An RNA of 177 nucleotides, treated with 2A3 and DMS and read out base by base. As a SHAPE reagent, 2A3 marks flexible, mostly unpaired nucleotides at the ribose 2'-OH. Source: RMDB library 15KREP, as collected in RNAgym.

RNA sequence: GGGAACGACUCGAGUAGAGUCGAAAAGGGAACUGCUGGGUUCCUCGGAUGUCGAUCCCCUCUCCCGUUCGGGAAAAGGGGGACUCCGGAACUCCCUGCAGGCUGGGGACGAAGCCCCCACCGGGCGCUCUAUACGUAGCUUCGGCUACGUAUAGAGAAAAGAAACAACAACAACAAC
Reactivity to 2A3 in 0.01 (KOAc 150mM, MgCl2 10mM, bicine 150mM(pH8.5), 24C), signal-to-noise 1, nucleotides 027 to 126: g020g000g020a060a020c000u040g040c080u100g080g000g020u010u000c040c000u000c000g000g010a050u190g030u050c020g090a300u160c020c000c040c000u000c000u020c000c010c000g130u300u270c100g000g000g050a010a060a010a030g060g000g010g010g000a000c000u010c000c000g000g010a000a000c030u060c010c010c000u000g020c010a000g060g020c090u050g000g000g010g020a010c050g060a050a020g000c020c040c000c000c020a020c000c030g110g100g000c090g030
Reactivity to DMS in 0.01 (KOAc 150mM, MgCl2 10mM, bicine 150mM(pH8.5), 24C), signal-to-noise 1, nucleotides 027 to 126: g000g000g000a060a040c020u010g020c050u010g000g010g020u000u010c040c020u000c020g000g010a030u010g020u000c020g000a170u030c000c000c000c020u000c190u000c010c000c020g030u010u010c240g020g000g010a000a000a130a050g010g020g040g020g010a010c000u000c000c000g010g000a060a070c130u000c000c050c030u000g020c000a060g000g030c220u000g000g000g030g060a060c090g000a150a220g000c040c000c000c010c000a080c060c040g000g040g010c150g020